Description: This 207-nucleotide RNA was probed chemically with DMS and 2A3. The reactions ran in a buffer of 150 mM KOAc, 10 mM MgCl2 and 150 mM bicine (pH 8.5), at 24 C. It was measured as part of the RMDB library M2RFPK. DMS (dimethyl sulfate) methylates the pairing face of unpaired adenines and cytosines. The DMS profile rests on 2,013 reads.
[RMDB]
RNA sequence: GGGAACGACUCGAGUAGAGUCGAAAAAUGGCGAAUGCAUGGGGAACUACAUCUGUGUCGCGAGUUCGAUUCUCGCCAGGGCCUGGUCCUGUAGCUCAGUUGGUAGAGCAACCUGUUCCCCGGACACAAAAUCCAGCUAGGUUCGCCUAGCUGGAAACCUUUUAGCAUGGUUCGCCAUGCUAAAAGGAAAAGAAACAACAACAACAAC
Reactivity to DMS in 0.01 (KOAc 150mM, MgCl2 10mM, bicine 150mM(pH8.5), 24C), signal-to-noise 2, nucleotides 027 to 156: a120u000g000g040c020g000a130a050u010g000c000a190u000g000g020g020g000a040a080c020u000a120c070a030u000c100u000g040u000g040u000c010g010c040g000a040g000u000u000c050g000a300u000u010c000u000c000g010c030c040a120g000g000g000c030c010u030g060g000u000c030c030u010g000u000a030g040c040u000c000a070g010u010u010g000g020u000a090g010a040g040c030a190a090c050c080u000g000u000u000c000c020c020c000g000g000a060c110a130c020a030a070a170a050u000c010c000a010g000c020u000a040g030g020u000u040c270g040c000c000u010a000g020c000u000g000g000a010a010a010
Reactivity to 2A3 in 0.01 (KOAc 150mM, MgCl2 10mM, bicine 150mM(pH8.5), 24C), signal-to-noise 2, nucleotides 027 to 156: a010u080g050g020c060g040a030a050u150g040c100a050u070g040g000g000g010a010a010c010u090a010c080a180u150c130u150g050u030g040u070c000g000c010g000a000g010u000u020c020g020a030u050u020c000u000c000g000c010c010a020g020g000g000c050c250u220g090g040u050c020c000u000g050u050a010g000c000u000c030a110g030u120u080g070g090u080a030g000a010g030c000a010a030c010c050u000g010u010u010c010c000c020c000g000g000a040c040a000c010a040a090a000a030u020c000c010a000g020c000u020a000g020g000u010u020c070g070c010c000u000a000g010c000u000g000g000a000a010a000